The record gives the reactivity of an RNA of 177 nucleotides to DMS and 2A3. The 2A3 profile rests on 1,750 reads.
RNA sequence: GGGAACGACUCGAGUAGAGUCGAAAAGAUAUGGAUUAUUUCGCAUCGAUCAUACCGCUGGUCGGAAACGACCAUGUAUGGGAGCGAUUCAUCCUAAGUCAAAUCGGCACAGUUCGCUGUGCCGAAACCUUGGUUCAAUCUUCGGAUUGAACCAAGGAAAAGAAACAACAACAACAAC
Reactivity to DMS in 0.01 (KOAc 150mM, MgCl2 10mM, bicine 150mM(pH8.5), 24C), signal-to-noise 1, nucleotides 027 to 126: g010a010u000a300u050g000g020a020u000u000a050u000u000u000c000g010c000a270u000c130g030a050u000c000a020u000a000c000c000g030c000u000g000g010u000c030g000g000a030a160a220c000g000a010c010c000a010u000g000u000a000u000g000g010g010a040g000c000g000a030u000u000c180a010u000c000c010u010a050a110g030u000c050a060a120a110u000c030g000g000c000a020c000a010g010u010u000c240g010c000u000g050u000g000c070c020g000a010a030a030
Reactivity to 2A3 in 0.01 (KOAc 150mM, MgCl2 10mM, bicine 150mM(pH8.5), 24C), signal-to-noise 1, nucleotides 027 to 126: g000a020u060a060u230g000g010a040u020u050a140u110u300u140c030g010c100a300u220c100g130a080u100c000a010u000a020c000c010g080c000u000g030g000u000c020g000g000a080a040a070c000g000a000c000c000a000u110g030u040a000u000g000g020g000a010g000c000g020a020u000u040c020a010u040c020c040u040a150a000g040u020c060a020a000a220u060c000g000g000c010a000c000a030g020u030u120c210g000c160u050g000u020g010c000c020g000a000a000a030

It was measured as part of the RMDB library TTRDEL. For 2A3 the reverse transcriptase was SuperScript II with manganese.